[RMDB]
RNA sequence: GGGAACGACUCGAGUAGAGUCGAAAAAGUGUGUAUCGGCCUAAUGCCUUAUGCUAUGCAUUUUUUGCCGAAAGUGUUUCCUGCUAUAUCAAUUAGAGGAAAGUGGGCAGUUGGGUUAAGCUUAUUCGAAUAAGUACAAGUUCGCUUGUACUUAUUCAAAAGAAACAACAACAACAAC
Reactivity to 2A3 in 0.01 (KOAc 150mM, MgCl2 10mM, bicine 150mM(pH8.5), 24C), signal-to-noise 4, nucleotides 027 to 126: a010g120u110g010u000g000u050a100u110c060g040g010c000c010u030a050a030u060g000c010c000u090u110a120u190g020c080u050a030u160g010c020a030u050u000u070u080u140u150g050c020c020g130a100a060a010g040u060g060u050u030u020c010c010u020g170c000u040a010u000a020u190c070a130a180u110u030a030g000a000g040g020a030a000a020g020u100g020g040g000c030a050g010u070u110g000g000g000u030u030a050a020g020c030u090u090a080u240u150c100
Reactivity to DMS in 0.01 (KOAc 150mM, MgCl2 10mM, bicine 150mM(pH8.5), 24C), signal-to-noise 9, nucleotides 027 to 126: a040g020u000g010u000g010u000a070u010c100g000g000c010c070u000a070a060u010g010c010c030u000u010a070u010g010c110u000a080u000g010c000a000u000u000u000u000u000u010g020c050c160g000a060a060a100g020u010g010u000u000u000c000c010u000g010c040u010a030u000a290u010c170a090a090u000u000a040g010a080g010g000a030a050a090g020u010g010g000g010c020a040g000u000u000g010g000g010u000u000a060a160g010c060u000u000a110u000u010c170